[RMDB]
RNA sequence: GGGAACGACUCGAGUAGAGUCGAAAAGCGUAGACCUCAGGCACCGAGUAAGUGUAUCGGAGCAAGCAUGACCAGAGUAGAGCCAGAGACAUACGUGGGUCAAAAGUGGGGCGUAAAGCAAGGACGGUCCAAGGGUGAGUCGACCUCCCUCGGCACACCCCAAAUUGUUGUUCGCAACAAUUUGGGGAAAAGAAACAACAACAACAAC
Reactivity to 2A3 in 0.01 (KOAc 150mM, MgCl2 10mM, bicine 150mM(pH8.5), 24C), signal-to-noise 1, nucleotides 027 to 156: g070c010g050u060a010g020a170c000c000u000c030a010g040g030c030a040c040c010g000a050g020u170a230a050g030u070g080u110a060u120c050g020g010a050g050c070a060a020g030c020a040u070g040a040c080c000a040g020a010g140u120a030g000a020g090c010c010a010g020a020g030a080c000a010u170a040c000g030u080g070g120g000u150c030a170a090a000a000g120u080g000g000g000g000c010g050u070a010a030a070g000c050a010a090g070g020a010c030g030g050u050c060c040a050a010g010g130g030u100g060a010g010u000c020g030a040c020c000u010c000c000c010u000c030g070g000c040a010c000a000
The data come from the RNA Mapping Database (RMDB), library VIROID. Structure probing data (2A3) for a 207-nucleotide construct. 2A3 adducts were read by reverse transcription with SuperScript II with manganese. For 2A3, 658 sequencing reads were counted.